Structure probing data (DMS and 2A3) for a 177-nucleotide construct. It was measured as part of the RMDB library OK2TST. 2A3 is a SHAPE reagent: it acylates the 2'-hydroxyl of flexible nucleotides of all four kinds.
RNA sequence: GGGAACGACUCGAGUAGAGUCGAAAAGCAAAGCAUUGGCUGAAUCAUUGAACUGGCGCUUGCUGGAUUCUGGUGCGAUUUACCGAGUGCUGGCACUCGCUGCUUUGCAUCAUCAGGUCGAUAUCAACGGUAGUGCACUAUUCGUAGUGCACUACCGAAAAGAAACAACAACAACAAC
Reactivity to DMS in 0.01 (KOAc 150mM, MgCl2 10mM, bicine 150mM(pH8.5), 24C), signal-to-noise 2, nucleotides 027 to 126: g020c020a020a050a050g010c040a060u000u010g000g040c140u010g000a040a070u000c090a110u000u000g000a050a040c050u010g000g020c020g020c150u010u010g020c020u000g000g020a150u000u000c010u000g020g030u000g000c110g020a050u000u010u010a030c100c010g000a030g000u000g020c070u000g000g000c000a020c040u000c040g020c250u000g020c020u000u000u000g000c000a030u010c040a090u010c070a120g020g000u000c040g010a110u010a100u000c070a100a200
Reactivity to 2A3 in 0.01 (KOAc 150mM, MgCl2 10mM, bicine 150mM(pH8.5), 24C), signal-to-noise 2, nucleotides 027 to 126: g040c030a040a010a030g000c000a010u080u170g100g000c060u090g070a070a030u190c040a050u050u160g090a110a080c030u030g010g000c060g070c260u170u270g000c010u000g070g010a180u070u000c000u050g040g000u070g050c050g020a020u020u030u080a030c040c050g020a010g000u040g030c050u170g000g040c030a010c010u050c010g040c020u040g040c010u040u050u000g030c000a000u030c010a030u010c000a010g160g020u010c030g020a040u040a030u200c050a040a100